The data come from the RNA Mapping Database (RMDB), library M2RFPK. Chemical mapping of a 207-nucleotide RNA with 2A3. Conditions: 150 mM KOAc, 10 mM MgCl2 and 150 mM bicine (pH 8.5), 24 C.

RNA sequence: GGGAACGACUCGAGUAGAGUCGAAAACCUAUCCAAAAUGAGAUCCCAUCUUGCACACUGUGCUAAUUUGAGAUUCUCAUGCCUCCUACUCGGAGAGAUCUGGACUAGAAGUCAGGGCAUCUGACUCAAUACAUUCGUCAGUUCGCUGACGAAUGAACCCCGCAGAUAAGUUCGCUUAUCUGCGGGGAAAAGAAACAACAACAACAAC
Reactivity to 2A3 in 0.01 (KOAc 150mM, MgCl2 10mM, bicine 150mM(pH8.5), 24C), signal-to-noise 3, nucleotides 027 to 156: c000c000u010a030u010c020c000a170a010a010a000u020g000a030g000a010u000c000c010c000a000u000c010u040u040g000c000a030c070a080c140u270g000u020g040c020u200a060a050u010u000u000g030a020g010a010u300u130c000u000c000a000u020g050c000c000u020c010c020u140a300c140u140c150g020g010a000g000a010g020a070u080c050u100g000g000a000c020u040a090g050a120a010g020u000c010a040g010g090g190c090a150u110c130u000g000a010c020u000c010a050a050u080a160c010a000u010u000c010g000u000c000a000g040u020u110c160g020c160u000g000a000c000g020a000a000u000g000a000a010